[RMDB]
RNA sequence: GGGAACGACUCGAGUAGAGUCGAAAAGGGAAAUCGAGACGAAGCUACGGCAGAUGCUGGGAGCCGUACGCUACCUGCGCAUUCUGGAGAAGCAAACCGAUCUACCAGACAGCCACGACGAAAUCAAAUUUAGCUCAUAGUUCGCUAUGAGCUAAAUAAAAGAAACAACAACAACAAC
Reactivity to 2A3 in 0.01 (KOAc 150mM, MgCl2 10mM, bicine 150mM(pH8.5), 24C), signal-to-noise 2, nucleotides 027 to 126: g040g010g020a030a040a020u060c030g010a040g020a130c070g080a090a020g000c010u010a010c020g050g000c020a010g030a150u100g000c040u050g010g000g020a020g030c000c000g060u060a040c060g000c020u090a210c000c000u040g020c040g000c060a040u140u010c010u060g090g010a110g020a040a030g020c020a070a030a030c030c000g030a050u000c010u050a140c000c010a010g010a040c020a000g030c000c010a040c050g080a010c040g010a050a010a040u140c050a040a050
Reactivity to DMS in 0.01 (KOAc 150mM, MgCl2 10mM, bicine 150mM(pH8.5), 24C), signal-to-noise 7, nucleotides 027 to 126: g010g020g000a060a140a060u010c050g000a090g000a100c100g010a150a100g010c030u000a040c040g000g000c010a060g010a100u000g020c030u000g020g010g000a170g000c000c130g010u000a050c190g010c010u000a060c070c020u000g000c130g030c050a090u000u000c030u010g000g000a120g010a070a080g010c050a060a100a120c120c040g000a060u000c030u000a200c030c010a080g010a070c160a070g000c010c010a040c060g000a050c060g000a060a050a090u000c120a040a080
The record gives the reactivity of an RNA of 177 nucleotides to 2A3 and DMS. High DMS reactivity at an A or C suggests that its Watson-Crick edge is free. 2A3 adducts were read by reverse transcription with SuperScript II with manganese. It was measured as part of the RMDB library OK2TST. The reactions ran in a buffer of 150 mM KOAc, 10 mM MgCl2 and 150 mM bicine (pH 8.5), at 24 C. DMS adducts were read by reverse transcription with MarathonRT.